[RMDB]
RNA sequence: GGGAACGACUCGAGUAGAGUCGAAAAGACGCCUGAUGGCGAACGUGCGCAAGAUAAGAAUGGUGGUAUAUACUGCCAAGAAUAACUAAUGGACGGCAGAGCGCACGUACCACCAAGGUCCACCAGACGUAUAGGGAUUAUUCGUAAUCCCUAUACGAAAAGAAACAACAACAACAAC
Reactivity to 2A3 in 0.01 (KOAc 150mM, MgCl2 10mM, bicine 150mM(pH8.5), 24C), signal-to-noise 7, nucleotides 027 to 126: g070a010c030g020c020c030u200g170a140u290g020g000c010g010a010a000c000g010u030g000c000g000c030a080a060g040a270u150a140a060g070a120a060u070g010g010u010g000g020u020a080u010a010u040a150c000u010g000c000c000a020a020g070a070a100u220a070a020c110u120a090a100u170g120g060a040c080g020g000c010a010g010a010g040c000g000c000a000c010g000u010a020c000c000a030c000c020a030a030g060g020u010c000c000a010c000c010a030g030a090
Reactivity to DMS in 0.01 (KOAc 150mM, MgCl2 10mM, bicine 150mM(pH8.5), 24C), signal-to-noise 9, nucleotides 027 to 126: g010a180c070g010c010c000u020g020a140u030g010g010c030g010a100a020c000g010u000g000c000g010c010a180a090g010a130u030a070a100g010a110a130u010g010g010u000g000g010u000a090u020a120u030a140c000u010g000c000c000a040a150g020a120a090u040a070a130c210u040a080a080u020g010g010a150c180g010g010c030a040g000a130g010c010g010c000a010c020g010u000a030c060c030a120c070c090a090a070g010g000u020c010c010a060c040c020a110g000a230
Description:
Chemical mapping of a 177-nucleotide RNA with 2A3 and DMS. Reactivities are rounded to 0.1 and cut off at 0 and 3. The DMS profile rests on 35,142 reads. The data come from the RNA Mapping Database (RMDB), library OK1LIB.